Source information: Structure probing data (2A3 and DMS) for a 177-nucleotide construct. For 2A3 the reverse transcriptase was SuperScript II with manganese. For DMS the reverse transcriptase was MarathonRT.

[RMDB]
RNA sequence: GGGAACGACUCGAGUAGAGUCGAAAAGGGCGUACGAUGGCUUUAACGGGUACGGGGGAUCAGGGUUUGAUUCCGGAGAGGGAGCCUGAGAAACGGCUACCAGGUCUAAGGACAGCAGCAGGCGCGACUUCUAAUAAGAGUUCGCUCUUAUUAGAAGAAAAGAAACAACAACAACAAC
Reactivity to 2A3 in 0.01 (KOAc 150mM, MgCl2 10mM, bicine 150mM(pH8.5), 24C), signal-to-noise 3, nucleotides 027 to 126: g040g000g000c010g030u080a050c060g050a120u100g030g000c020u110u090u150a100a030c050g000g000g030u110a040c030g030g010g030g020g010a020u070c020a030g110g000g000u060u140u120g060a080u080u000c040c020g010g020a080g010a040g040g010g000a010g010c010c000u010g000a000g040a040a120a010c090g000g000c010u060a100c010c010a030g060g020u040c020u040a040a050g050g010a020c010a040g020c000a000g000c020a030g050g000c010g000c000g030a020
Reactivity to DMS in 0.01 (KOAc 150mM, MgCl2 10mM, bicine 150mM(pH8.5), 24C), signal-to-noise 5, nucleotides 027 to 126: g000g010g010c050g020u000a070c080g000a130u010g020g000c070u000u010u000a080a120c120g010g000g010u000a050c100g000g010g010g000g010a050u010c030a070g010g000g010u010u000u010g010a070u010u000c020c010g000g000a130g000a130g000g000g000a050g000c020c010u000g000a160g000a060a100a120c160g010g010c010u000a060c020c010a090g010g010u000c050u030a110a130g010g000a050c080a060g000c050a030g000c050a050g000g000c050g010c070g010a130
Source information: Values cover nucleotides 27 to 126.